[RMDB]
Structure probing data (2A3 and DMS) for a 177-nucleotide construct. It was measured as part of the RMDB library OK1LIB. Reactivities are given for positions 27 through 126.
RNA sequence: GGGAACGACUCGAGUAGAGUCGAAAAUAUUUGGGAAAACCUUGCUAUACUGGUUAUAAAUAGUAACAACUUGGUCGGGUUUAUCCAAAUCAAUAAACUUGUCCAUGAACUUGCUUAUGAUCAAAAAUCCAUAAUCAGGUUUCGACCUGAUUAUGGAAAAAGAAACAACAACAACAAC
Reactivity to 2A3 in 0.01 (KOAc 150mM, MgCl2 10mM, bicine 150mM(pH8.5), 24C), signal-to-noise 3, nucleotides 027 to 126: u170a050u010u070u060g010g000g000a010a030a020a040c000c000u010u030g000c010u040a030u070a230c080u140g060g010u040u040a030u050a090a190a160u210a070g030u010a020a040c070a010a040c020u030u070g000g010u010c010g010g000g000u000u000u020a040u020c020c000a000a040a050u110c040a000a070u080a080a030a050c040u080u050g020u010c000c050a040u100g040a030a070c030u040u050g020c030u110u140a060u250g060a090u130c110a000a060a110a040a020
Reactivity to DMS in 0.01 (KOAc 150mM, MgCl2 10mM, bicine 150mM(pH8.5), 24C), signal-to-noise 2, nucleotides 027 to 126: u060a050u010u000u000g000g010g000a070a070a050a030c040c000u000u010g020c070u000a050u050a140c250u030g000g010u010u000a000u030a040a160a120u060a140g000u010a000a000c020a050a100c150u000u000g000g000u000c040g000g000g000u000u000u000a010u000c020c040a010a010a030u000c280a110a070u000a030a030a010c060u000u000g010u020c010c000a070u030g000a030a120c130u000u000g010c040u000u000a020u030g000a120u010c110a030a090a130a100a050